[RMDB]
Conditions: 150 mM KOAc, 10 mM MgCl2 and 150 mM bicine (pH 8.5), 24 C. The record gives the reactivity of an RNA of 207 nucleotides to 2A3. Values cover nucleotides 27 to 156.
RNA sequence: GGGAACGACUCGAGUAGAGUCGAAAAGGCGGAUGAGGACCUCGUUAAAAACGUCCACUUUGUAAUUGGCAACGAUUACGCACUUGCAGCUUAAUUAAGCAGCACGAUCAACCUUGUGGUGGUUCCGCACUUGGAUUGAUCGUCAUUUAGGGACCUCCUUCAAGCCAAGGUUCGCCUUGGCUUGAAGAAAAGAAACAACAACAACAAC
Reactivity to 2A3 in 0.01 (KOAc 150mM, MgCl2 10mM, bicine 150mM(pH8.5), 24C), signal-to-noise 2, nucleotides 027 to 156: g010g020c000g020g000a070u030g060a120g000g040a040c000c000u030c000g070u080u130a110a080a020a000a010c030g010u020c050c000a000c080u080u140u190g020u010a040a050u060u050g050g030c040a040a030c070g030a020u040u080a000c040g000c050a090c090u040u130g000c050a030g000c060u040u050a140a070u290u140a190a030g000c050a000g020c020a000c020g000a000u000c000a010a010c000c000u010u000g000u010g040g010u030g020g030u080u050c040c000g020c000a000c000u000u040g030g030a170u070u000g000a010u000c030g070u050c050a100u180u090u170a010g000g000g040a040c000c000u010c000